[RMDB]
RNA sequence: GGGAACGACUCGAGUAGAGUCGAAAACUGCGCGUUCUGUCGACGCCCAGCUCGACGAGCUGAACCGUAUGCAAUUGCCCUACGAGGAGUACCAGCGGCGAUACCGAGAAAUUACGGGGCAAUAAAAACUCUCUAGUAGGUUCGCCUACUAGAGAGUAAAAGAAACAACAACAACAAC
Reactivity to DMS in 0.01 (KOAc 150mM, MgCl2 10mM, bicine 150mM(pH8.5), 24C), signal-to-noise 3, nucleotides 027 to 126: c040u010g000c140g020c160g020u010u000c050u010g000u010c050g030a070c020g000c070c080c010a110g010c100u020c010g010a130c110g010a100g000c040u000g000a070a110c110c010g020u000a030u010g010c140a080a070u000u000g000c000c010c010u000a120c090g000a160g000g020a120g010u000a090c030c020a130g000c030g020g000c040g000a080u000a130c040c030g010a140g000a090a070a080u000u010a110c120g000g000g010g030c040a030a010u000a020a060a060a070
Reactivity to 2A3 in 0.01 (KOAc 150mM, MgCl2 10mM, bicine 150mM(pH8.5), 24C), signal-to-noise 3, nucleotides 027 to 126: c010u050g000c020g000c040g060u050u040c060u160g130u080c060g010a020c030g040c000c040c010a030g040c060u000c010g150a120c050g000a060g040c040u010g010a020a050c050c020g060u090a070u170g080c060a080a080u040u020g010c010c000c000u000a060c030g020a040g120g000a050g050u100a120c000c040a040g060c020g040g000c020g080a040u080a080c000c020g030a010g080a120a170a040u190u070a070c120g010g010g010g000c000a010a000u090a030a040a000a010
The record gives the reactivity of an RNA of 177 nucleotides to DMS and 2A3. Reactivities are rounded to 0.1 and cut off at 0 and 3. The RNA was probed in 150 mM KOAc, 10 mM MgCl2 and 150 mM bicine (pH 8.5) at 24 C.